Chemical mapping of a 177-nucleotide RNA with DMS and 2A3. For DMS the reverse transcriptase was MarathonRT. Reactivities are rounded to 0.1 and cut off at 0 and 3.
RNA sequence: GGGAACGACUCGAGUAGAGUCGAAAAGAUAUGGAACAUGAGGCUUUUGACGUCCAAGCAUGUCGGAAACGACAUGUGGACGAUAAGCCUAUGUUCCUAAGUCAAAAGACGUCCUUCGGGACGUCAACGUCGGAAGGAAGUUCGCUUCCUUCCGACGAAAAGAAACAACAACAACAAC
Reactivity to DMS in 0.01 (KOAc 150mM, MgCl2 10mM, bicine 150mM(pH8.5), 24C), signal-to-noise 1, nucleotides 027 to 126: g000a020u060a230u000g020g000a000a010c000a020u000g010a020g010g050c000u010u000u030u010g010a300c130g040u000c000c000a080a300g040c030a000u000g000u010c040g040g010a100a100a080c000g020a000c000a010u000g010u000g000g000a020c000g020a090u010a020a020g000c000c000u000a010u010g000u000u000c000c010u010a010a150g000u020c000a100a120a130a100g000a010c000g000u000c010c000u000u000c290g040g020g000a020c110g030u010c020a030a040
Reactivity to 2A3 in 0.01 (KOAc 150mM, MgCl2 10mM, bicine 150mM(pH8.5), 24C), signal-to-noise 1, nucleotides 027 to 126: g050a010u060a000u080g020g020a010a000c010a010u160g300a130g100g000c070u300u150u280u300g300a200c120g010u000c010c000a020a060g300c050a010u030g040u000c000g020g040a000a020a060c000g010a000c000a000u000g010u010g040g010a000c010g030a040u070a100a000g000c000c000u000a000u010g000u000u000c010c000u000a030a020g060u050c020a140a030a050a190g020a000c000g010u000c050c000u030u090c300g100g000g000a000c000g020u030c000a000a000
The RNA was probed in 150 mM KOAc, 10 mM MgCl2 and 150 mM bicine (pH 8.5) at 24 C. The 2A3 profile rests on 1,992 reads.